[RMDB]
RNA sequence: GGGAACGACUCGAGUAGAGUCGAAAAAUACUGAUUCUAGGAGUAUUGGACAACCCGCAGAUCGGAGCAUCGACUUCUGGCAAACUCUCUCAUCAAGCCGCCUAUCCUACAUACGCAGAUGAGGCGACUACUCUCUAUUGUUCGCAAUAGAGAGUAGAAAAGAAACAACAACAACAAC
Reactivity to 2A3 in 0.01 (KOAc 150mM, MgCl2 10mM, bicine 150mM(pH8.5), 24C), signal-to-noise 5, nucleotides 027 to 126: a000u090a020c030u030g050a160u220u080c070u140a060g070g070a020g090u050a060u070u100g030g030a030c030a070a090c030c010c020g000c030a030g020a100u100c040g050g020a040g020c030a060u070c040g080a090c040u070u020c020u110g040g000c020a010a030a100c030u030c010u010c010u000c050a070u010c030a080a020g040c030c010g000c010c010u030a070u020c020c010u050a100c030a140u160a050c070g000c050a010g020a100u070g040a030g050g010c000g000a010
Reactivity to DMS in 0.01 (KOAc 150mM, MgCl2 10mM, bicine 150mM(pH8.5), 24C), signal-to-noise 7, nucleotides 027 to 126: a050u010a040c030u010g010a100u010u010c130u010a100g010g000a060g020u000a030u000u010g000g010a150c160a100a120c040c020c020g020c120a060g000a060u000c060g010g000a110g010c070a060u010c050g010a070c050u000u000c060u000g000g000c080a060a070a090c080u000c030u000c020u000c030a060u010c090a050a110g020c060c030g010c030c020u000a050u000c030c030u010a060c110a090u000a090c140g020c070a080g000a050u000g010a040g010g010c070g020a190